The data come from the RNA Mapping Database (RMDB), library OK1LIB. Chemical mapping of a 177-nucleotide RNA with DMS and 2A3. For DMS, 1,900 sequencing reads were counted. Reactivities are given for positions 27 through 126. The 2A3 profile rests on 3,550 reads. The reactions ran in a buffer of 150 mM KOAc, 10 mM MgCl2 and 150 mM bicine (pH 8.5), at 24 C.

RNA sequence: GGGAACGACUCGAGUAGAGUCGAAAAGAAGAACACGGAGGAAGAAAACCUCCGUAAAAGAAAAGGGCAAACGUCAUAAGAAAUGGCGACGCACUGAAUGCCCAAAGCAGAAAGCUAAUCAGUGUAACGUACCAUAGUCCUUCGGGACUAUGGUACGAAAAGAAACAACAACAACAAC
Reactivity to DMS in 0.01 (KOAc 150mM, MgCl2 10mM, bicine 150mM(pH8.5), 24C), signal-to-noise 2, nucleotides 027 to 126: g030a190a050g020a210a170c140a030c000g080g000a030g000g000a060a110g040a050a100a210a080c000c000u010c000c000g000u000a000a040a080a040g000a010a030a160a020g030g000g010c030a010a130a160c000g020u000c000a020u070a180a100g000a110a290a020u010g010g000c000g030a010c200g030c030a040c010u020g000a030a060u000g000c000c000c000a040a020a010g020c070a200g000a030a030a060g000c040u000a180a090u000c010a000g000u000g000u000a040a200
Reactivity to 2A3 in 0.01 (KOAc 150mM, MgCl2 10mM, bicine 150mM(pH8.5), 24C), signal-to-noise 3, nucleotides 027 to 126: g090a030a010g040a040a020c020a010c060g010g000a000g050g030a080a120g110a150a220a040a040c000c000u000c000c010g000u000a000a000a000a000g090a000a050a010a000g000g000g000c010a010a020a040c000g010u000c010a000u110a120a080g180a210a280a010u040g000g000c000g020a020c060g020c000a000c000u000g010a070a000u080g000c000c000c000a030a030a000g000c050a040g120a100a210a010g060c030u030a020a050u000c000a000g000u000g010u040a020a020